[RMDB]
RNA sequence: GGGAACGACUCGAGUAGAGUCGAAAAGGUUCGCGGUGGGCCAGCUGGUCUCGGCGCUCACCCACUACUGGGCCGACCGCCGAUGGACGUUGCGGCGACUCGCGGGAGCGGUGGGACAGAGCGGCUUCUACGCGCUCGGCUCCCCGAGGGAGGGCAAGUAUGCCUUACUCUUCGGAGUAAGGCAUACAAAAGAAACAACAACAACAAC
Reactivity to 2A3 in 0.01 (KOAc 150mM, MgCl2 10mM, bicine 150mM(pH8.5), 24C), signal-to-noise 1, nucleotides 027 to 156: g090g030u130u090c080g020c070g030g050u280g010g100g040c020c070a040g050c010u010g150g000u000c000u000c000g000g000c000g000c010u040c000a070c030c040c070a120c190u300a080c100u160g020g000g000c050c160g150a170c020c060g000c000c000g110a110u140g090g060a040c170g070u130u170g020c010g000g000c010g020a070c020u020c030g000c050g000g000g000a040g000c010g000g260u090g000g030g000a020c080a130g020a000g000c000g090g020c050u180u000c000u010a010c050g010c010g080c010u000c020g020g020c100u020c050c000c000c000g020a020g000g020g120a080g010g000g000c020a160a000
This 207-nucleotide RNA was probed chemically with 2A3. Conditions: 150 mM KOAc, 10 mM MgCl2 and 150 mM bicine (pH 8.5), 24 C. For 2A3, 408 sequencing reads were counted.